The record gives the reactivity of an RNA of 177 nucleotides to DMS and 2A3. Values are in units of 0.01, from 0 to 300, in steps of 10. The 2A3 profile rests on 4,423 reads.
RNA sequence: GGGAACGACUCGAGUAGAGUCGAAAAUAAUCGCUCGCACGAUCCCUUUGGAUGGCCUGAAGAUUAGGAACGCUAGAAUUGAGAGGAGGGGGGCCAAGAGUUUGCCAGAACAGUGCUCAUCUAGCAACCCAUUUAAUCAUUUCGAUGAUUAAAUGGGAAAAGAAACAACAACAACAAC
Reactivity to DMS in 0.01 (KOAc 150mM, MgCl2 10mM, bicine 150mM(pH8.5), 24C), signal-to-noise 5, nucleotides 027 to 126: u010a090a080u000c040g010c030u010c100g010c080a130c060g000a070u000c010c020c190u000u010u000g000g010a070u000g000g000c010c030u010g010a070a100g000a090u010u000a070g010g010a090a080c150g010c030u010a040g010a050a100u010u010g000a050g000a110g000g000a120g000g000g010g000g000g010c040c060a060a080g010a080g000u000u010u000g010c060c060a120g000a070a060c110a080g010u010g010c020u000c040a060u010c010u000a050g010c060a130a170
Reactivity to 2A3 in 0.01 (KOAc 150mM, MgCl2 10mM, bicine 150mM(pH8.5), 24C), signal-to-noise 4, nucleotides 027 to 126: u080a010a070u040c000g020c030u030c040g000c040a050c060g070a040u050c010c010c000u050u020u120g090g010a040u030g000g000c000c020u050g030a160a060g030a160u100u140a060g060g060a100a060c060g000c020u010a040g050a150a190u130u110g020a090g000a020g040g070a080g000g020g010g000g000g010c020c010a060a000g060a000g040u030u210u160g060c030c010a030g020a120a050c030a020g020u020g090c010u010c020a050u020c010u000a020g000c010a010a050

Description: In probing experiments dimethyl sulfate is read out at A N1 and C N3, which are open when not base-paired. DMS adducts were read by reverse transcription with MarathonRT.